[RMDB]
RNA sequence: GGGAACGACUCGAGUAGAGUCGAAAAUGCAAUUAGUUCGCUAAUUGCACAUGUCUAGUCGCUAGAAAACGAUCAAAACUAGGGACUAGACUUUAUUGAUCGGGGGCCUGGCUUUCGAGCCAGGCAACAGUGUAUCCACAUUCGUGUGGAUACACUGAAAAGAAACAACAACAACAAC
Reactivity to 2A3 in 0.01 (KOAc 150mM, MgCl2 10mM, bicine 150mM(pH8.5), 24C), signal-to-noise 6, nucleotides 027 to 126: u060g000c000a000a000u000u010a000g030u020u040c160g000c110u000a010a000u000u010g040c000a010c030a050u090g000u000c010u000a010g000u000c010g040c300u010a010g070a100a210a050a050c130g110a220u170c080a030a060a020a150c010u000a010g070g000g000a000c000u000a000g000a000c000u000u020u010a040u020u080g070a060u130c060g020g010g000g050g000c010c000u000g000g000c020u070u060u080c170g050a010g010c000c000a010g000g000c010a000a000
Reactivity to DMS in 0.01 (KOAc 150mM, MgCl2 10mM, bicine 150mM(pH8.5), 24C), signal-to-noise 5, nucleotides 027 to 126: u000g000c000a010a010u000u000a010g010u000u020c230g010c000u000a000a000u000u000g000c000a040c160a060u000g010u000c000u000a000g010u000c000g000c000u000a000g010a080a060a110a140c140g010a080u010c100a040a060a100a140c010u000a010g000g000g000a010c000u000a000g010a000c010u000u010u010a040u010u000g000a050u010c050g000g000g000g010g010c000c000u000g000g000c000u000u000u010c140g000a010g020c000c000a010g000g000c010a000a010